[RMDB]
RNA sequence: GGGAACGACUCGAGUAGAGUCGAAAAUUUUUGCGAAGUCUGCCCAAAGCACGUAGUGUUUGAAGAUUUCGGUCCUAUGCAAUAUGAACCCAUGAACCAUGUCAGGUCCUGACGGAAGCAGCAUUAAGUGGAUCAUCAUAUGUGCCGUAGGGUAGCCCUCCGAUUAUAUCUUCGGAUAUAAUCGGAGAAAAGAAACAACAACAACAAC
Reactivity to 2A3 in 0.01 (KOAc 150mM, MgCl2 10mM, bicine 150mM(pH8.5), 24C), signal-to-noise 3, nucleotides 027 to 156: u080u120u020u070u140g090c020g010a020a010g010u000c020u050g050c030c040c050a060a010a010g040c020a020c100g300u220a110g020u050g020u010u030u090g100a100a060g000a000u010u030u040c060g070g030u210c030c000u010a010u040g000c010a010a000u000a010u040g000a020a040c030c000c010a010u040g020a020a080c090c030a050u030g050u090c010a000g040g040u020c020c040u160g120a060c130g010g000a010a010g000c010a000g000c000a000u010u030a110a000g000u000g010g010a020u030c000a020u000c000a000u040a020u070g190u040g170c070c070g020u010a020g010g010g010u050a050g010c000c010
Reactivity to DMS in 0.01 (KOAc 150mM, MgCl2 10mM, bicine 150mM(pH8.5), 24C), signal-to-noise 2, nucleotides 027 to 156: u000u000u000u000u000g050c030g010a050a020g020u010c000u000g010c040c060c030a090a100a140g000c020a000c000g040u000a090g040u000g030u000u010u010g010a060a040g010a060u010u000u000c020g050g000u000c010c010u000a100u000g020c040a050a080u030a040u000g020a100a190c050c000c020a070u010g030a120a200c100c210a150u000g010u000c130a300g020g000u000c020c000u050g000a140c210g030g020a080a040g000c100a180g000c030a030u000u000a110a250g010u010g010g000a050u000c060a100u000c020a020u000a060u000g020u000g000c030c050g040u010a040g000g010g010u010a100g010c020c110